The record gives the reactivity of an RNA of 177 nucleotides to DMS and 2A3. DMS adducts were read by reverse transcription with MarathonRT.
RNA sequence: GGGAACGACUCGAGUAGAGUCGAAAACCAGAUAGUGACAGCCAGAUGUGGCGCGUAAGGAAUGAAUUCUUCCGAAAGAAUCAGUGGUAACAUUGUAGUAUGAGGAGGUUGGACUAGUGUUGCAUCGCCUACUGCACUGUUUCGACAGUGCAGUAGGAAAAGAAACAACAACAACAAC
Reactivity to DMS in 0.01 (KOAc 150mM, MgCl2 10mM, bicine 150mM(pH8.5), 24C), signal-to-noise 4, nucleotides 027 to 126: c010c030a110g000a090u020a040g030u010g010a080c110a120g010c050c050a080g000a040u010g020u000g010g020c030g020c030g020u030a100a040g010g000a100a040u020g000a070a140u000u000c030u000u000c040c030g000a100a070a040g010a130a080u000c000a030g010u000g010g020u060a060a120c050a010u020u000g020u020a070g000u020a060u000g000a210g000g030a030g010g010u000u000g020g010a080c050u020a110g010u010g000u010u020g030c100a070u040c050g030
Reactivity to 2A3 in 0.01 (KOAc 150mM, MgCl2 10mM, bicine 150mM(pH8.5), 24C), signal-to-noise 2, nucleotides 027 to 126: c000c000a000g070a040u250a050g060u060g150a080c070a040g150c100c000a060g020a080u030g010u030g080g000c000g000c000g010u050a160a050g070g060a000a280u100g040a020a050u150u080c000u010u060c030c000g070a090a020a030g020a000a030u040c000a030g000u010g040g020u030a080a000c000a000u030u050g000u020a020g030u020a000u090g050a050g000g010a010g000g000u060u060g010g000a060c050u000a020g080u000g000u040u010g030c010a030u080c030g000